Source information: An RNA of 177 nucleotides, treated with DMS and 2A3 and read out base by base. Conditions: 150 mM KOAc, 10 mM MgCl2 and 150 mM bicine (pH 8.5), 24 C. High 2A3 reactivity points to a flexible backbone, as in loops and unpaired stretches. The 2A3 profile rests on 6,165 reads. Source: RMDB library M2PK50, as collected in RNAgym.
[RMDB]
RNA sequence: GGGAACGACUCGAGUAGAGUCGAAAAACUUUUUGAUUCGUCAAAAAGUAACUACCGAGAUUGCGACUCGGUAUACGCAAAUAACCCUUGGAAACAAGGGAACAAACUAACGUUUCGACGUUAGUAACCCUUCUUAAAACUUCGGUUUUAAGAAGGGAAAAGAAACAACAACAACAAC
Reactivity to DMS in 0.01 (KOAc 150mM, MgCl2 10mM, bicine 150mM(pH8.5), 24C), signal-to-noise 3, nucleotides 027 to 126: a020c010u000u000u000u000u000g010a010u000u010c200g020u000c000a000a020a000a000a000g000u010a050a140c160u010a010c000c000g020a000g030a100u010u010g020c240g000a100c010u010c000g010g010u000a010u000a030c160g020c140a060a080a070u010a070a130c000c010c010u000u000g000g000a140a100a140c020a000a010g000g000g010a030a010c150a060a090a050c010u000a000a000c000g010u000u000u000c300g010a020c000g010u000u000a000g000u000a070a120
Reactivity to 2A3 in 0.01 (KOAc 150mM, MgCl2 10mM, bicine 150mM(pH8.5), 24C), signal-to-noise 4, nucleotides 027 to 126: a000c000u010u010u000u000u010g020a020u030u050c070g050u000c060a010a000a000a000a000g010u030a030a070c030u020a020c000c020g000a010g010a070u130u270g060c080g130a070c010u000c000g000g030u000a020u030a010c020g010c030a060a060a030u180a110a150c000c010c000u010u010g000g030a030a050a030c000a000a010g010g000g010a030a000c010a020a090a000c000u010a000a000c000g010u000u060u110c210g100a010c000g000u000u000a000g000u000a000a000